[RMDB]
RNA sequence: GGGAACGACUCGAGUAGAGUCGAAAACGCGCGCGCUCGGCCGCGAUGACGAGCGGCAUGCAGGAGCGCCGCGAGAAGAGCUGGCAUCGACAGACGAUCGGCUCGAUCGUCCACGCGAUCGCCGGGCGCUACUCGCUGGCGCCGAUCGUCGGCGACGCUCUCCUUGCCGAUUCGUCGGCAAGGAGAGAAAAGAAACAACAACAACAAC
Reactivity to 2A3 in 0.01 (KOAc 150mM, MgCl2 10mM, bicine 150mM(pH8.5), 24C), signal-to-noise 1, nucleotides 027 to 156: c030g040c010g000c020g000c000g000c050u050c090g110g000c000c000g000c060g070a040u110g090a050c080g010a030g050c000g010g010c000a030u070g000c050a020g160g040a070g030c020g030c030c000g000c000g000a000g030a020a000g020a040g000c040u040g010g000c020a000u000c010g060a090c020a010g040a040c000g010a000u000c010g070g100c230u170c140g000a020u010c000g000u000c000c040a090c130g030c000g020a020u040c110g000c000c050g020g020g000c000g010c000u050a090c010u000c000g000c100u130g050g000c000g000c030c010g020a110u110c060g070u050c030g040g000c030g000a040c020g010
This 207-nucleotide RNA was probed chemically with 2A3.
The 2A3 profile rests on 899 reads.
For 2A3 the reverse transcriptase was SuperScript II with manganese.